[RMDB]
RNA sequence: GGGAACGACUCGAGUAGAGUCGAAAAACUUAAUGCUUUCGGACGGGGAUCCCCGGCAAAUAACGUAAGAGGAUUUUUAUUUGUGCAUGUGUUCCUGCAAUUGAUCUCUUUGAUGACAUUCUCAUUCUAACCGCACAAAAUUCGUUUUGUGCGGUUAAAAAGAAACAACAACAACAAC
Reactivity to DMS in 0.01 (KOAc 150mM, MgCl2 10mM, bicine 150mM(pH8.5), 24C), signal-to-noise 3, nucleotides 027 to 126: a050c080u020u030a090a050u010g000c030u000u000u020c070g010g020a080c090g010g010g010g000a100u030c050c030c020c020g000g000c020a050a030a020u000a030a030c200g010u030a080a040g010a090g000g000a080u030u020u000u000u000a060u010u010u020g030u000g020c030a020u000g010u000g000u000u010c020c000u000g000c070a050a070u020u010g010a080u010c030u000c050u000u000u000g010a130u010g000a060c130a120u010u000c010u000c010a090u030u010c110
Reactivity to 2A3 in 0.01 (KOAc 150mM, MgCl2 10mM, bicine 150mM(pH8.5), 24C), signal-to-noise 4, nucleotides 027 to 126: a000c100u120u120a120a000u170g000c030u070u130u150c060g040g040a070c010g010g000g020g080a110u140c020c010c000c000g010g000c030a030a030a060u100a050a010c080g120u080a090a000g040a050g100g110a130u110u030u000u050u040a080u030u040u070g030u010g000c040a040u050g000u010g030u070u030c010c010u010g000c020a010a110u120u110g050a060u040c030u030c000u050u040u070g050a080u050g020a030c020a040u110u030c060u030c020a030u170u020c020

Annotation
Conditions: 150 mM KOAc, 10 mM MgCl2 and 150 mM bicine (pH 8.5), 24 C. This 177-nucleotide RNA was probed chemically with DMS and 2A3. It was measured as part of the RMDB libraries RFM100 and RFMREP.